[RMDB]
RNA sequence: GGGAACGACUCGAGUAGAGUCGAAAAGAUAUGGAUCACUACCCACCCUAUCUCAGGCGAAGAACUCGGAAACGAGGGAGCCUGAUCUAGGAGGUGAUCCUAAGUCAAAUCGCUGUUCGCAGCGAAAGCUUCUAUAUUGGUUCGCCAAUAUAGAAGCAAAAGAAACAACAACAACAAC
Reactivity to 2A3 in 0.01 (KOAc 150mM, MgCl2 10mM, bicine 150mM(pH8.5), 24C), signal-to-noise 6, nucleotides 027 to 126: g050a060u240a140u300g000g000a010u000c010a030c020u210a280c000c000c010a020c000c010c000u020a020u010c020u000c010a010g000g000c020g200a300a030g030a120a040c000u000c000g000g040a060a060a060c010g000a010g000g000g010a000g000c000c000u000g010a000u010c010u010a010g000g020a010g000g000u000g000a000u000c010c000u010a060a020g110u070c090a050a020a230u050c000g000c010u000g060u100u100c300g010c140a000g000c010g010a080a000a000
Reactivity to DMS in 0.01 (KOAc 150mM, MgCl2 10mM, bicine 150mM(pH8.5), 24C), signal-to-noise 5, nucleotides 027 to 126: g000a150u010a200u000g000g000a020u000c000a010c020u010a140c010c010c010a300c090c000c000u000a010u010c150u000c000a010g010g010c010g010a090a110g000a090a230c000u000c010g010g010a070a070a190c010g000a010g010g000g000a080g010c010c010u000g000a000u010c130u000a010g000g010a090g010g010u000g000a000u000c000c000u010a040a060g010u010c090a040a080a110u000c010g030c000u000g000u010u000c180g020c010a010g000c000g000a010a070a130
Structure probing data (2A3 and DMS) for a 177-nucleotide construct. Reactivities are rounded to 0.1 and cut off at 0 and 3. Values cover nucleotides 27 to 126. Conditions: 150 mM KOAc, 10 mM MgCl2 and 150 mM bicine (pH 8.5), 24 C. The 2A3 profile rests on 15,018 reads. For DMS, 5,600 sequencing reads were counted. The data come from the RNA Mapping Database (RMDB), library TTRDEL.